[RMDB]
RNA sequence: GGGAACGACUCGAGUAGAGUCGAAAACAGCUUCUUCACAGGUAGCCACAAGAACAGGACCAAAUGGGUCCCCAGCCAGCCGUGUUCAAUGUCUAGACCAGUCCUUCAUUGCUGAUUUUAGGCUGAGAGUAAGGGUGAAGUUCGCUUCACCCUUACUAAAAGAAACAACAACAACAAC
Reactivity to DMS in 0.01 (KOAc 150mM, MgCl2 10mM, bicine 150mM(pH8.5), 24C), signal-to-noise 3, nucleotides 027 to 126: c080a140g000c070u000u010c010u010u000c040a050c090a050g000g030u000a070g020c040c030a060c120a090a120g020a070a060c150a130g010g010a080c050c020a070a090a130u010g010g000g010u000c010c010c030c040a080g020c010c040a060g030c030c050g000u010g000u000u000c050a050a070u010g020u000c010u000a080g010a040c040c010a050g010u000c080c050u010u020c160a090u010u000g000c020u000g000a060u000u020u000u020a030g010g010c010u010g010a100g010
Reactivity to 2A3 in 0.01 (KOAc 150mM, MgCl2 10mM, bicine 150mM(pH8.5), 24C), signal-to-noise 2, nucleotides 027 to 126: c020a020g000c000u040u000c010u090u060c070a030c020a100g000g030u030a030g000c050c000a050c040a040a070g050a070a030c040a080g050g010a030c010c010a010a160a300u170g090g010g000u010c030c000c000c020a000g060c020c010a010g000c000c010g080u020g030u050u060c040a060a080u090g020u060c010u020a040g010a070c000c020a000g110u060c000c010u050u080c060a110u000u210g020c020u020g040a060u040u000u040u090a030g010g020c030u000g020a040g000